Chemical mapping of a 207-nucleotide RNA with 2A3.
The data come from the RNA Mapping Database (RMDB), library OK3TST.
For 2A3 the reverse transcriptase was SuperScript II with manganese.
RNA sequence: GGGAACGACUCGAGUAGAGUCGAAAACGCUCACGCAGCCGCGCGCGCACGUGGACCUCGGCGUGGGCUACACGGCGGCCUACGCCGCCGCGGCCAUGCGCACGCCGCUCACAGACCUGGGCAACACGCCGCAGAACCUGUACAUGACGCGCGGCGAGACCAGGUUAUACUUCGGUAUAACCUGGUCAAAAGAAACAACAACAACAAC
Reactivity to 2A3 in 0.01 (KOAc 150mM, MgCl2 10mM, bicine 150mM(pH8.5), 24C), signal-to-noise 2, nucleotides 027 to 156: c030g020c040u070c080a080c090g170c050a040g000c000c020g010c000g020c010g000c010g060c030a060c050g000u040g000g100a080c000c020u020c000g000g000c020g000u000g000g180g020c000u000a010c020a020c000g010g000c000g000g020c000c170u300a110c200g000c060c000g030c020c000g000c040g020g100c060c050a080u120g000c100g030c020a000c010g000c000c000g030c010u080c020a000c000a000g030a010c010c010u000g020g030g020c020a130a070c090a040c210g020c000c000g170c040a000g040a030a030c010c000u000g010u070a070c020a080u070g100a080c000g010c000g010c000g000g000c000g000a000

The reactions ran in a buffer of 150 mM KOAc, 10 mM MgCl2 and 150 mM bicine (pH 8.5), at 24 C.
Values cover nucleotides 27 to 156.